[RMDB]
RNA sequence: GGGAACGACUCGAGUAGAGUCGAAAAGACCAAUCGUUCGCGAUUGGUCAAAAGGUGGAUGCUACGCUACCGAACUAGCAAAAGUGCAGCUACAAAGCACAAAAACUUGGUUGUUCGCAACCAAGAAGAUCCUUACGAUGUUCGCAUCGUAAGGAUCAAAAGAAACAACAACAACAAC
Reactivity to 2A3 in 0.01 (KOAc 150mM, MgCl2 10mM, bicine 150mM(pH8.5), 24C), signal-to-noise 2, nucleotides 027 to 126: g020a000c010c000a000a000u010c010g030u050u040c220g000c000g140a000u010u000g000g000u000c000a030a010a000a020g030g010u010g030g000a070u070g080c040u060a020c100g000c010u000a010c000c020g050a040a030c040u020a020g000c000a020a130a060a090g030u020g000c020a000g020c010u030a070c060a060a170a000g000c030a000c010a030a040a020a020a030c000u000u000g010g000u010u000g010u040u030c200g000c060a010a010c000c020a000a000g010a010a020
Reactivity to DMS in 0.01 (KOAc 150mM, MgCl2 10mM, bicine 150mM(pH8.5), 24C), signal-to-noise 2, nucleotides 027 to 126: g050a010c020c000a000a000u000c000g000u000u060c170g040c030g010a000u030u000g010g000u000c000a020a030a100a180g080g000u000g000g000a080u000g000c000u000a020c090g000c010u000a100c000c000g000a070a080c090u000a010g010c000a030a080a100a070g000u000g040c000a080g010c070u000a150c140a030a080a090g010c000a030c060a060a090a110a150a150c010u000u000g000g000u010u000g000u000u000c160g010c000a000a000c000c000a030a020g020a100a050

Structure probing data (2A3 and DMS) for a 177-nucleotide construct. DMS adducts were read by reverse transcription with MarathonRT. The reactions ran in a buffer of 150 mM KOAc, 10 mM MgCl2 and 150 mM bicine (pH 8.5), at 24 C.